[RMDB]
Structure probing data (DMS and 2A3) for a 177-nucleotide construct. The data come from the RNA Mapping Database (RMDB), library TTRDES. Conditions: 150 mM KOAc, 10 mM MgCl2 and 150 mM bicine (pH 8.5), 24 C. DMS adducts were read by reverse transcription with MarathonRT.
RNA sequence: GGGAACGACUCGAGUAGAGUCGAAAAGAUAUGGAGUCGUGACAGGGAGCGAGUUGAUCGGAAACGAUCAACUCGCAUCGAUCUGUACGACUCCUAAGUCAAAACUGCGAGGCUUCGGCCUCGCAGACCAUAAUAGCAUCUUCGGAUGCUAUUAUGGAAAAGAAACAACAACAACAAC
Reactivity to DMS in 0.01 (KOAc 150mM, MgCl2 10mM, bicine 150mM(pH8.5), 24C), signal-to-noise 3, nucleotides 027 to 126: g000a020u000a180u020g000g000a020g010u000c000g010u010g020a030c000a020g020g000g020a150g030c010g000a020g000u000u000g020a000u000c000g020g000a030a040a110c000g010a010u000c000a000a010c000u000c000g020c010a000u000c190g010a100u000c000u000g010u000a010c000g000a010c000u000c000c000u000a010a060g000u000c000a110a090a130a230c020u010g000c010g010a020g020g010c010u000u010c240g040g000c010c000u000c000g000c010a000g010a050
Reactivity to 2A3 in 0.01 (KOAc 150mM, MgCl2 10mM, bicine 150mM(pH8.5), 24C), signal-to-noise 3, nucleotides 027 to 126: g000a000u010a000u040g000g000a000g010u000c010g000u050g200a040c000a010g030g090g090a300g030c010g010a000g010u010u000g010a010u010c010g010g000a030a010a010c010g020a000u020c000a010a010c000u030c010g000c000a010u010c010g040a100u000c010u000g010u020a010c000g000a000c000u000c000c000u000a010a000g000u000c000a020a000a120a180c020u020g000c000g010a000g030g000c020u120u300c300g150g020c000c000u000c000g000c020a010g000a000